Structure probing data (2A3) for a 177-nucleotide construct. Reactivities are rounded to 0.1 and cut off at 0 and 3. The reactions ran in a buffer of 150 mM KOAc, 10 mM MgCl2 and 150 mM bicine (pH 8.5), at 24 C. For 2A3, 538 sequencing reads were counted. 2A3 adducts were read by reverse transcription with SuperScript II with manganese.

[RMDB]
RNA sequence: GGGAACGACUCGAGUAGAGUCGAAAAAGCGUUCAGGCGUCGGCGAAUUUAUUGGAAAGCGGAGUAGAUGCGCACGGCGUCGUGGUUAUGGAUUACGGCGAUUUUAGCGUCACGCUACAGCAUUCCAGUGAGGGUGACUGUUCGCAGUCACCCUCACAAAAGAAACAACAACAACAAC
Reactivity to 2A3 in 0.01 (KOAc 150mM, MgCl2 10mM, bicine 150mM(pH8.5), 24C), signal-to-noise 1, nucleotides 027 to 126: a000g060c070g000u000u000c000a030g040g000c000g140u100c070g030g000c030g000a000a010u070u000u000a100u120u050g030g000a200a080a100g040c020g000g170a060g040u060a000g040a000u000g020c000g000c000a070c090g000g020c000g130u030c000g000u030g000g030u060u040a300u300g020g050a070u050u040a050c010g000g030c000g030a070u000u040u000u180a000g000c020g090u110c010a000c020g060c000u060a060c000a060g030c000a050u000u000c000c010a030